[RMDB]
RNA sequence: GGGAACGACUCGAGUAGAGUCGAAAACGUCCGUCGGCCAGCGGUUAACCUAAAACGGGCUGGUCCUUCGGUGCGCUUUGCACGCCGUGUUGCCGCGGGACGAGACCAAAACGGCGCGCUAAGCAUGUAGCGCCGGGGAUGUAGCGCCUUCGGACGGCGUUAAUUUCCAGUUCGCUGGAAAUUAACGAAAAGAAACAACAACAACAAC
Reactivity to 2A3 in 0.01 (KOAc 150mM, MgCl2 10mM, bicine 150mM(pH8.5), 24C), signal-to-noise 4, nucleotides 027 to 156: c010g000u000c000c000g010u010c010g000g010c020c030a030g040c030g110g050u120u120a140a160c020c030u120a090a080a040a040c100g040g080g000c020u030g050g010u010c010c000u250u280c000g010g000u030g000c020g010c000u000u010u090g010c010a030c020g020c000c000g020u030g050u070u110g040c030c010g060c050g080g070g040a090c070g050a060g060a080c070c020a010a050a000a020c000g000g000c000g010c000g000c010u050a020a010g030c030a060u240g120u260a020g010c000g010c000c020g010g000g000g010a010u040g070u200a050g040c020g010c070c000u000u010c000g010g000a010c000g000g000